[RMDB]
RNA sequence: GGGAACGACUCGAGUAGAGUCGAAAAGAUAUGGAAUAUCCCUGUCAGCGAAGAACGAUUAUCGGAAACGAUAAUCGGGAGCUGAUAGGGAGUAUUCCUAAGUCAAACCGAACGUUCGCGUUCGGAACCUCAGGAAUAUGUUCGCAUAUUCCUGAGGAAAAGAAACAACAACAACAAC
Reactivity to 2A3 in 0.01 (KOAc 150mM, MgCl2 10mM, bicine 150mM(pH8.5), 24C), signal-to-noise 3, nucleotides 027 to 126: g010a010u120a050u160g000g000a000a000u000a000u010c000c000c000u000g010u000c000a020g020c100g270a300a060g070a130a020c020g000a000u000u020a000u000c000g060g000a070a030a070c030g010a000u000a020a000u000c020g000g020g000a010g000c010u000g000a000u010a000g000g000g010a000g010u010a000u000u000c000c000u000a080a020g090u050c040a060a060a160c010c000g000a020a010c000g040u160u220c300g000c010g190u000u010c000g000g020a030a090
Reactivity to DMS in 0.01 (KOAc 150mM, MgCl2 10mM, bicine 150mM(pH8.5), 24C), signal-to-noise 3, nucleotides 027 to 126: g000a080u000a300u000g000g000a000a010u000a070u000c000c000c000u000g000u010c000a000g010c000g000a120a170g000a110a220c000g010a020u010u010a010u000c000g000g000a120a110a240c000g020a010u000a000a000u000c000g000g000g010a060g000c000u000g010a020u000a000g010g000g000a000g020u010a010u010u000c000c000u000a030a110g010u000c010a090a140a280c000c020g010a000a010c000g030u000u010c300g000c020g010u000u010c000g000g000a040a100